[RMDB]
RNA sequence: GGGAACGACUCGAGUAGAGUCGAAAACCUCUUUCCUCUCUUCCCCUUUCAGCUGCUGUUAUUACGUGGAGUUUGGAGCCUAAGCUUUGAAAACUCCCAUGUGGCGCCUGUCUUAAGUCGGAGCAUGCUAAUAGGCAUUGUUCGCAAUGCCUAUUAGAAAAGAAACAACAACAACAAC
Reactivity to 2A3 in 0.01 (KOAc 150mM, MgCl2 10mM, bicine 150mM(pH8.5), 24C), signal-to-noise 2, nucleotides 027 to 126: c000c000u010c030u040u050u020c000c000u010c010u030c010u040u030c020c000c010c000u000u110u040c030a040g000c020u100g000c010u020g050u170u030a120u100u110a060c080g030u170g000g000a050g020u020u010u020g030g000a000g000c000c040u120a200a010g020c020u000u070u060g080a060a040a020a000c020u010c000c010c000a040u050g000u010g030g030c030g040c010c000u060g000u050c040u070u090a060a030g010u030c030g050g000a020g050c010a000u060g040
Reactivity to DMS in 0.01 (KOAc 150mM, MgCl2 10mM, bicine 150mM(pH8.5), 24C), signal-to-noise 4, nucleotides 027 to 126: c020c000u010c060u000u000u000c020c010u000c030u000c030u000u000c020c000c030c090u000u000u000c070a100g020c070u010g010c030u010g010u000u000a070u010u000a060c120g010u000g020g010a040g000u000u000u000g010g010a030g010c010c230u000a110a160g010c010u000u000u010g010a070a020a020a030c020u000c030c010c030a040u000g000u000g010g000c050g010c050c030u000g000u000c050u000u000a060a100g010u000c030g010g000a100g010c060a080u010g010

The record gives the reactivity of an RNA of 177 nucleotides to 2A3 and DMS. For DMS, 5,233 sequencing reads were counted. For 2A3 the reverse transcriptase was SuperScript II with manganese. Reactivities are given for positions 27 through 126. For DMS the reverse transcriptase was MarathonRT.